[RMDB]
RNA sequence: GGGAACGACUCGAGUAGAGUCGAAAAACAUAGGACCGCGUGCGGAGGUUAACACAGGUAGCAUGCGAAAGGAUGGGAUGCUUGUGACUGGCUGCAAGGCCUGCAUGCCGCCAUCCGAAACGUACGAGGCCGCCGUACACCGCGUGUGCUGCUCGCAGCCUUGGCGUGUAUUCGUACACGCCAAGGCAAAAGAAACAACAACAACAAC
Reactivity to 2A3 in 0.01 (KOAc 150mM, MgCl2 10mM, bicine 150mM(pH8.5), 24C), signal-to-noise 1, nucleotides 027 to 156: a000c060a110u090a030g050g000a080c000c030g040c040g020u010g000c030g050g030a030g060g050u090u030a090a000c080a000c020a090g000g110u080a000g070c020a010u050g010c060g050a170a000a010g010g000a000u030g010g030g000a050u150g050c060u120u000g080u070g120a300c080u100g010g000c000u000g000c020a070a110g100g010c000c010u000g000c000a000u090g040c040c000g060c010c000a050u040c000c020g030a000a020a020c100g000u000a040c070g000a050g000g070c050c030g010c000c000g020u000a070c000a020c060c010g040c000g010u100g000u030g000c000u000g020c020u050c090g000c030a010